[RMDB]
RNA sequence: GGGAACGACUCGAGUAGAGUCGAAAAGUAAUAGAUAAGUGGAUGACGAGAAAGGGUGCGCUGAUAUCCACUACGAAUGCUAGCAGUAAAAAGAAUAGCGCUCCUUAUACAACUAGCAACAAAAGGAUAAGGUAUCGUGAUGUCAAUCACAUUGCGAGCUCAUAUAUUUAUUCGUAAAUAUAUGAGCAAAAGAAACAACAACAACAAC
Reactivity to 2A3 in 0.01 (KOAc 150mM, MgCl2 10mM, bicine 150mM(pH8.5), 24C), signal-to-noise 6, nucleotides 027 to 156: g020u050a030a110u080a110g080a060u060a160a050g000u020g030g020a040u040g040a060c080g020a060g080a130a060a040g040g020g020u060g010c030g000c010u030g040a040u020a010u120c010c020a010c020u030a020c070g060a070a030u060g020c020u030a010g010c050a040g050u130a050a050a070a050a020g070a060a070u060a050g010c010g010c020u030c010c010u010u020a090u020a030c020a030a050c010u030a000g000c020a020a070c020a060a120a020a030g050g010a050u070a070a050g050g020u070a040u070c010g000u000g000a010u010g030u060c060a100a100u100c000a080c000a010u000u010g000c010g010a010
Reactivity to DMS in 0.01 (KOAc 150mM, MgCl2 10mM, bicine 150mM(pH8.5), 24C), signal-to-noise 3, nucleotides 027 to 156: g030u000a110a100u000a090g020a150u000a060a090g030u010g000g010a070u000g020a250c070g010a140g020a120a150a080g020g010g020u000g020c010g040c030u000g010a140u000a090u010c010c020a060c000u000a100c070g020a120a160u010g030c010u010a030g010c010a120g020u010a060a090a060a110a080g000a060a090u000a100g030c050g000c050u000c000c010u020u010a140u010a070c030a060a040c000u000a030g010c020a040a160c090a030a050a080a060g020g020a060u010a080a120g000g020u010a130u000c010g050u000g000a010u020g010u010c010a100a080u000c140a090c010a040u020u000g010c030g010a130